This 177-nucleotide RNA was probed chemically with DMS and 2A3.
The 2A3 profile rests on 9,420 reads.
[RMDB]
RNA sequence: GGGAACGACUCGAGUAGAGUCGAAAACUUCAAUGGUUCGCCAUUGAAGAAACAUGGUAAACGCUGAGACCAUGAAAGAUCGAAAAACGAUCAAAGCGUAAAAAAGUAGUCAGUUCGCUGACUACAACUUGUCUAUAUCGUUCGCGAUAUAGACAAGAAAAGAAACAACAACAACAAC
Reactivity to DMS in 0.01 (KOAc 150mM, MgCl2 10mM, bicine 150mM(pH8.5), 24C), signal-to-noise 4, nucleotides 027 to 126: c010u000u010c000a000a010u000g000g010u000u010c200g010c000c000a010u000u000g000a010a000g010a060a080a140c020a000u000g000g020u000a080a100a030c010g020c000u000g010a190g000a130c000c000a000u000g000a080a130a170g000a000u000c000g000a090a110a070a080a140c000g010a000u000c010a040a100a080g000c000g000u000a010a030a070a070a120a090g000u000a000g000u000c000a020g010u000u010c170g010c000u000g010a000c000u000a000c000a030a080
Reactivity to 2A3 in 0.01 (KOAc 150mM, MgCl2 10mM, bicine 150mM(pH8.5), 24C), signal-to-noise 4, nucleotides 027 to 126: c000u010u000c000a000a000u020g000g040u040u070c180g040c080c000a000u000u000g000a000a000g000a030a030a000c010a000u010g010g030u130a200a140a020c010g000c020u020g030a000g030a040c000c000a000u000g000a060a050a000g000a000u010c010g070a110a070a060a020a230c010g000a000u000c000a020a030a020g000c000g000u060a100a120a020a000a010a010g010u010a000g000u010c010a010g000u030u090c190g000c130u010g000a000c000u010a000c000a000a020